[RMDB]
RNA sequence: GGGAACGACUCGAGUAGAGUCGAAAAGAUAUGGACGAACGAGCAACAGCUAUACCGCUCGUCGGAAACGACGAUGUAUAGACAUGCUUCAGUAGUCCUAAGUCAAAGUGUAGCUUCGGCUACACAACAAUGUACCUGCCUUCGGGCAGGUACAUUGAAAAGAAACAACAACAACAAC
Reactivity to DMS in 0.01 (KOAc 150mM, MgCl2 10mM, bicine 150mM(pH8.5), 24C), signal-to-noise 2, nucleotides 027 to 126: g030a020u000a300u020g000g030a000c000g000a150a100c300g000a020g000c020a030a040c280a120g030c000u000a000u000a000c000c030g000c000u000c000g020u010c010g030g000a070a100a180c000g000a010c010g030a000u010g000u010a000u000a000g000a070c090a120u000g000c000u000u010c040a040g010u010a080g000u000c020c000u000a010a090g000u010c050a100a050a120g000u000g010u000a000g000c000u000u000c190g030g010c000u000a010c000a000c000a080a180
Reactivity to 2A3 in 0.01 (KOAc 150mM, MgCl2 10mM, bicine 150mM(pH8.5), 24C), signal-to-noise 1, nucleotides 027 to 126: g040a060u080a060u090g010g000a010c000g040a000a040c020g000a010g000c000a010a140c040a120g030c000u000a020u010a000c000c020g000c010u000c000g000u020c000g010g000a080a080a030c020g000a000c000g000a000u300g030u000a000u000a020g140a050c040a090u040g000c000u000u010c010a000g000u010a000g010u000c000c000u010a020a010g040u000c020a130a040a050g030u000g020u010a000g010c010u050u040c300g110g020c000u000a000c000a010c000a000a000
The record gives the reactivity of an RNA of 177 nucleotides to DMS and 2A3. The RNA was probed in 150 mM KOAc, 10 mM MgCl2 and 150 mM bicine (pH 8.5) at 24 C. DMS (dimethyl sulfate) methylates the pairing face of unpaired adenines and cytosines. For DMS, 1,319 sequencing reads were counted. Reactivities are given for positions 27 through 126. For 2A3 the reverse transcriptase was SuperScript II with manganese. The data come from the RNA Mapping Database (RMDB), library TTRDEL.